Structure probing data (DMS and 2A3) for a 177-nucleotide construct. 2A3 adducts were read by reverse transcription with SuperScript II with manganese. High DMS reactivity at an A or C suggests that its Watson-Crick edge is free.

RNA sequence: GGGAACGACUCGAGUAGAGUCGAAAAGAUAUGGAUAGAGCUUUUGACGAAGUAGAGGGUCGGAAACGACCCGAUCUUCGAUAAGCUCGUCCUAAGUCAAAGGUGCGAGAGUUCGCUCUCGCACCAAUCCAAUAGGUAGGUUCGCCUACCUAUUGGAAAAAGAAACAACAACAACAAC
Reactivity to DMS in 0.01 (KOAc 150mM, MgCl2 10mM, bicine 150mM(pH8.5), 24C), signal-to-noise 4, nucleotides 027 to 126: g000a030u010a300u020g000g000a020u000a090g010a020g010c000u000u000u000u010g010a200c160g000a010a000g020u000a030g000a300g000g000g010u000c010g020g000a080a090a170c010g000a010c000c000c000g000a020u000c000u000u000c000g010a110u000a010a000g020c010u000c010g000u000c020c000u000a030a180g000u000c040a100a100a100g010g020u000g000c000g000a020g010a030g010u000u010c300g000c010u000c000u000c000g030c010a010c010c000a020a040
Reactivity to 2A3 in 0.01 (KOAc 150mM, MgCl2 10mM, bicine 150mM(pH8.5), 24C), signal-to-noise 3, nucleotides 027 to 126: g020a010u110a040u130g020g000a020u100a300g020a150g000c030u150u150u140u190g240a190c040g000a010a020g020u300a040g060a100g020g020g000u010c020g010g070a070a040a040c020g000a000c000c010c000g000a010u000c000u000u000c010g000a010u020a000a000g000c010u020c010g000u000c000c000u040a160a020g050u040c070a050a080a170g000g000u020g000c010g010a000g000a010g000u120u220c300g040c190u000c000u000c000g000c000a000c000c000a000a010